Chemical mapping of a 177-nucleotide RNA with DMS and 2A3.
RNA sequence: GGGAACGACUCGAGUAGAGUCGAAAAAGCAUUUUUAACGGUUUUCAUCUAGCUCCUAUGGAAGGUAGAGGCUUCAGAAUUGACAGUGACCAGUCGCAGUAUUACAACUUGAAGGAGAAACUGAAGGCAUUGCAGGAGUUUUCGAACUCCUGCAAUGAAAAGAAACAACAACAACAAC
Reactivity to DMS in 0.01 (KOAc 150mM, MgCl2 10mM, bicine 150mM(pH8.5), 24C), signal-to-noise 2, nucleotides 027 to 126: a090g010c090a040u000u010u010u000u020a070a170c110g030g000u000u000u000u000c040a060u020c050u000a060g010c030u000c030c010u000a060u010g020g010a060a030g000g000u010a050g010a090g000g010c030u020u020c050a060g000a060a120u010u000g010a080c060a050g010u000g000a070c050c070a090g010u000c080g060c100a050g010u000a080u000u010a060c150a100a070c070u000u000g000a100a030g010g010a130g000a070a070a100c080u000g000a050a090g010g010
Reactivity to 2A3 in 0.01 (KOAc 150mM, MgCl2 10mM, bicine 150mM(pH8.5), 24C), signal-to-noise 1, nucleotides 027 to 126: a000g070c050a070u070u060u060u090u170a130a080c070g000g050u010u000u060u180c020a050u050c040u020a030g080c010u000c060c000u010a060u090g100g020a040a000g010g000u040a040g000a000g040g070c010u000u040c030a070g110a180a050u170u140g070a040c050a040g080u030g100a040c060c050a000g000u050c010g030c050a000g030u130a030u250u150a040c010a010a060c080u060u090g030a070a050g000g050a040g040a050a080a050c030u010g000a100a020g070g000
The RNA was probed in 150 mM KOAc, 10 mM MgCl2 and 150 mM bicine (pH 8.5) at 24 C.
The DMS profile rests on 1,562 reads.
It was measured as part of the RMDB library OK2TRN.
The 2A3 profile rests on 697 reads.